This 170-nucleotide RNA was probed chemically with 2A3 and DMS. For DMS the reverse transcriptase was MarathonRT. Source: RMDB library 15KLIB, as collected in RNAgym. The reactions ran in a buffer of 150 mM KOAc, 10 mM MgCl2 and 150 mM bicine (pH 8.5), at 24 C.

RNA sequence: GGGAACGACUCGAGUAGAGUCGAAAAAGAGGGGAUGAGCUGGUAAAGAGGGGUGGAACGUCGGGUGGAAGCACUCCCAAGAAGAGCAGAGAGAAGGCAAGAAUCGGACGAUUUCCCCAUGACGCUGAGAGUUCACUGUUCGCAGUGAACAAAAGAAACAACAACAACAAC
Reactivity to 2A3 in 0.01 (KOAc 150mM, MgCl2 10mM, bicine 150mM(pH8.5), 24C), signal-to-noise 9, nucleotides 027 to 129: a000g110a040g010g020g000g000a030u040g010a020g020c020u020g030g040u110a070a100a010g040a030g010g010g010g010u040g030g010a070a030c020g080u050c030g030g010g010u050g020g020a040a010g000c020a030c030u020c010c000c010a030a010g050a020a010g010a010g010c120a000g050a000g000a010g000a080a020g030g000c020a020a000g010a050a050u060c030g010g020a010c020g020a030u020u010u000c020c000c000c020a080u130g040a040c060g010c110u060g040a040g010a010
Reactivity to DMS in 0.01 (KOAc 150mM, MgCl2 10mM, bicine 150mM(pH8.5), 24C), signal-to-noise 9, nucleotides 027 to 129: a080g000a080g000g000g000g000a020u030g020a070g040c050u030g000g000u030a040a060a050g020a080g000g010g000g040u010g040g000a060a040c070g000u030c010g020g010g040u000g000g000a040a080g040c110a110c070u000c010c000c070a080a090g010a070a050g020a050g000c060a030g000a080g020a040g030a030a010g000g050c090a030a050g030a080a030u040c060g010g000a050c090g020a090u000u000u000c010c010c000c060a110u040g020a060c140g000c050u010g010a110g000a170